Overview
Chemical mapping of a 177-nucleotide RNA with 2A3 and DMS. For DMS, 3,410 sequencing reads were counted. It was measured as part of the RMDB library TTRDEL. The 2A3 profile rests on 5,692 reads.
RNA sequence: GGGAACGACUCGAGUAGAGUCGAAAAGAUAUGGAAAUGACCACGGAUCCCAGCUAAGACAGUCGGAAACGAUCGAGCUGGAUCUAUCAAUUUCCUAAGUCAAAAUCCACGGGUUCGCCCGUGGAAAUCACUUAAUAGCGUUCGCGCUAUUAAGUGAAAAAGAAACAACAACAACAAC
Reactivity to 2A3 in 0.01 (KOAc 150mM, MgCl2 10mM, bicine 150mM(pH8.5), 24C), signal-to-noise 4, nucleotides 027 to 126: g010a030u090a040u130g000g020a020a000a020u020g050a040c090c070a090c280g030g000a000u110c150c080c010a000g010c000u050a130a040g090a120c070a060g050u040c000g030g070a090a090a070c020g020a020u100c030g040a000g000c010u020g000g000a000u020c000u000a070u040c040a120a150u000u010u010c000c020u030a150a020g090u040c050a030a000a000a300u020c000c000a000c010g010g000g020u050u080c300g100c030c000c000g000u000g000g000a000a000a000
Reactivity to DMS in 0.01 (KOAc 150mM, MgCl2 10mM, bicine 150mM(pH8.5), 24C), signal-to-noise 5, nucleotides 027 to 126: g000a080u010a300u010g000g010a030a000a020u000g000a120c300c170a070c240g000g000a010u010c110c020c040a030g000c000u000a160a060g010a110c300a120g000u010c020g000g000a100a080a170c020g000a010u000c070g010a020g030c010u000g010g000a020u010c000u010a050u010c050a120a030u000u000u000c000c000u000a050a120g010u000c020a020a050a110a140u000c000c000a010c000g000g000g010u000u010c250g030c010c000c010g010u000g000g000a000a000a050